Background:
An RNA of 207 nucleotides, treated with 2A3 and DMS and read out base by base. Source: RMDB library OK3TST, as collected in RNAgym. For DMS, 3,181 sequencing reads were counted.

[RMDB]
RNA sequence: GGGAACGACUCGAGUAGAGUCGAAAAUCACAAAAAUCUGAAUGACGUCGUUAGCUUUUAAUUUAGUGGCUGGCAUCGCAAGGGACCAACUCCCAUCACUGGCAGCGGUUGCUGUGAUGGCAUUGCCGUUGCUAUCAGCUGCGGAGGUCCCGUUAACUGACAGGUUAGGAUUCGUCCUAACCUGUCAAAAAGAAACAACAACAACAAC
Reactivity to 2A3 in 0.01 (KOAc 150mM, MgCl2 10mM, bicine 150mM(pH8.5), 24C), signal-to-noise 3, nucleotides 027 to 156: u090c000a040c080a110a100a080a040a000u070c070u170g060a160a100u140g050a110c050g000u100c030g000u080u000a000g020c000u010u190u070u260a130a130u180u180u180a190g030u140g020g030c040u000g030g050c010a070u130c050g020c180a090a110g000g000g000a000c000c000a030a040c070u000c020c020c000a010u050c030a020c020u030g000g040c000a000g000c020g020g000u080u020g000c000u000g050u130g140a130u300g040g000c000a010u100u240g000c000c000g010u000u000g000c010u020a070u070c080a000g020c020u050g040c130g020g010a030g040g000u010c010c000c000g010u000u030a040a040c040
Reactivity to DMS in 0.01 (KOAc 150mM, MgCl2 10mM, bicine 150mM(pH8.5), 24C), signal-to-noise 2, nucleotides 027 to 156: u020c030a110c060a050a130a090a060a130u010c100u000g010a130a170u000g010a070c060g020u000c030g000u000u000a060g020c050u010u000u010u010a050a160u000u000u000a070g060u000g020g010c030u000g010g010c030a090u000c000g030c080a070a140g000g050g020a060c020c040a030a120c100u000c060c010c000a080u010c060a120c060u000g020g010c020a020g000c000g020g020u010u000g010c000u000g000u000g000a130u000g000g030c050a040u000u000g040c020c000g020u000u000g000c020u000a040u000c060a090g020c090u000g010c080g000g030a120g040g000u000c000c020c000g040u000u010a060a120c140
Notes: DMS adducts were read by reverse transcription with MarathonRT. The reactions ran in a buffer of 150 mM KOAc, 10 mM MgCl2 and 150 mM bicine (pH 8.5), at 24 C.